[RMDB]
RNA sequence: GGGAACGACUCGAGUAGAGUCGAAAAUACCCUGCUUGCACUAAUGGUCAUGCUGUACCGACUCUCUUUAGACUUAAGGGAGGUGCACCUGUAAAAAAAGUAGCCUUUGGCGGUGAUCAAGUACAUGAGACCGCCCCGUUCGCGGGGCGGAAAAGAAACAACAACAACAAC
Reactivity to 2A3 in 0.01 (KOAc 150mM, MgCl2 10mM, bicine 150mM(pH8.5), 24C), signal-to-noise 2, nucleotides 027 to 129: u130a010c010c010c000u030g000c020u010u060g000c020a010c020u010a040a020u060g000g030u100c000a020u040g080c000u040g000u060a040c010c040g060a050c010u010c000u000c000u000u040u160a000g120a290c080u110u110a000a040g000g000g000a000g030g000u000g000c010a000c010c000u040g070u060a000a000a000a000a000a000a000g050u080a040g060c050c000u000u090u150g000g030c000g060g000u120g000a030u070c000a000a030g030u070a020c050a050u060g080a000g020a010
Reactivity to DMS in 0.01 (KOAc 150mM, MgCl2 10mM, bicine 150mM(pH8.5), 24C), signal-to-noise 1, nucleotides 027 to 129: u050a100c000c010c060u120g010c090u070u050g060c110a170c140u050a150a140u050g000g000u010c000a030u000g000c050u030g150u090a090c050c180g000a080c070u090c050u110c000u000u000u100a050g000a120c130u000u060a060a050g030g010g000a160g000g110u000g000c070a030c070c020u040g040u060a060a090a070a000a000a000a180g010u010a200g000c000c050u000u050u000g000g050c050g010g000u000g000a150u010c000a010a090g040u000a040c000a170u150g010a120g010a140